RNA sequence: GGGAACGACUCGAGUAGAGUCGAAAAGAUAUGGAGCGAUCCCAUCCGAAUGCAUAUGGAGGUUAUCAGCUCGGAAACGAGCUGUAAGACCUAUGAAGUAUGAGGUAGAUGGGAUCGCUCCUAAGUCGAAUACCUCUGUCUUCGGACAGAGGUAUUCAAAAGAAACAACAACAACAAC
Reactivity to 2A3 in 0.01 (KOAc 150mM, MgCl2 10mM, bicine 150mM(pH8.5), 24C), signal-to-noise 1, nucleotides 027 to 126: g030a000u000a010u050g000g000a000g050c010g000a000u000c000c000c030a040u020c120c030g270a100a050u090g050c060a030u070a030u040g050g000a060g000g020u020u020a130u220c000a000g010c000u010c070g000g000a010a030a020c000g000a000g000c010u000g050u050a270a030g060a010c030c000u190a300u110g000a020a020g030u010a020u000g060a050g290g050u300a300g200a040u080g000g020g040a010u000c010g000c000u000c000c000u000a020a000g000u010c000
Reactivity to DMS in 0.01 (KOAc 150mM, MgCl2 10mM, bicine 150mM(pH8.5), 24C), signal-to-noise 1, nucleotides 027 to 126: g020a070u000a170u010g000g010a020g000c010g020a000u000c000c000c020a010u010c000c300g030a090a110u040g000c000a000u010a000u000g000g020a010g030g000u000u010a300u000c000a010g010c000u010c000g010g000a090a060a140c010g020a030g030c000u000g010u000a050a300g010a020c000c000u000a270u030g010a140a150g000u000a000u000g020a020g000g030u000a030g000a020u000g020g000g000a010u010c000g010c000u000c010c000u000a000a040g000u000c030